[RMDB]
RNA sequence: GGGAACGACUCGAGUAGAGUCGAAAAAGGUCGCCACGGUCAUGCUGGCCGCCCAGUAUCCGCAUUUCUGGCUGGUGGUGAUCGGCACCACCCUGGGCAUGCUGAUCGCCAACGUACCGGUGGUACACUAGUAAUGAUCGUUCGCGAUCAUUACUAGAAAAGAAACAACAACAACAAC
Reactivity to 2A3 in 0.01 (KOAc 150mM, MgCl2 10mM, bicine 150mM(pH8.5), 24C), signal-to-noise 6, nucleotides 027 to 126: a010g100g030u100c060g010c020c010a010c020g020g020u070c070a030u090g030c020u020g010g010c030c020g070c030c020c000a010g020u110a030u050c020c020g010c040a040u020u090u020c050u040g110g000c070u070g030g000u010g000g000u020g020a140u180c060g080g040c020a000c000c000a020c000c000c000u040g010g000g020c030a010u050g000c010u030g010a030u040c030g000c010c000a040a020c030g030u030a020c010c010g060g030u020g000g000u040a020c030a020
Reactivity to DMS in 0.01 (KOAc 150mM, MgCl2 10mM, bicine 150mM(pH8.5), 24C), signal-to-noise 7, nucleotides 027 to 126: a120g010g010u000c100g030c010c020a050c040g010g010u010c110a050u010g020c040u000g000g000c030c220g000c120c060c070a090g010u000a030u000c020c090g010c060a050u010u000u000c050u000g020g000c100u010g030g010u000g010g010u000g010a280u010c150g030g020c020a030c020c010a040c020c020c010u000g010g010g000c100a060u000g010c010u000g000a030u000c090g020c010c010a030a030c060g010u000a030c020c010g020g020u000g010g020u000a060c090a300